[RMDB]
RNA sequence: GGGAACGACUCGAGUAGAGUCGAAAAUCAAAGCACUGGAACUCAUAUUGUACCACGACUCACACCUUUGUCAAGGCGCUGACCAUGGAUGGCAAGCAGGCUGCCUGGCGGUUUAUCCGGAUAGAUACGGCCUGUGUGUGUGUGCUCAGCAGGAAGGGCAUGACAUAAGGUUCGCCUUAUGUCAUGCAAAAGAAACAACAACAACAAC
Reactivity to 2A3 in 0.01 (KOAc 150mM, MgCl2 10mM, bicine 150mM(pH8.5), 24C), signal-to-noise 1, nucleotides 027 to 156: u160c160a000a000a000g000c000a040c100u030g020g060a050a010c060u070c140a100u070a090u140u240g060u060a050c000c010a030c070g070a060c000u010c030a000c000a000c030c060u090u050u050g110u080c050a090a070g060g000c050g060c170u050g040a080c010c000a060u100g020g050a060u060g090g000c020a030a000g040c000a000g010g030c000u050g000c010c010u000g020g010c060g000g050u060u250u140a070u060c000c000g050g040a070u020a080g050a000u090a160c060g000g000c020c000u010g020u020g060u050g010u010g000u000g040u020g010c060u020c030a050g000c010a020g020g030a000a040g060g030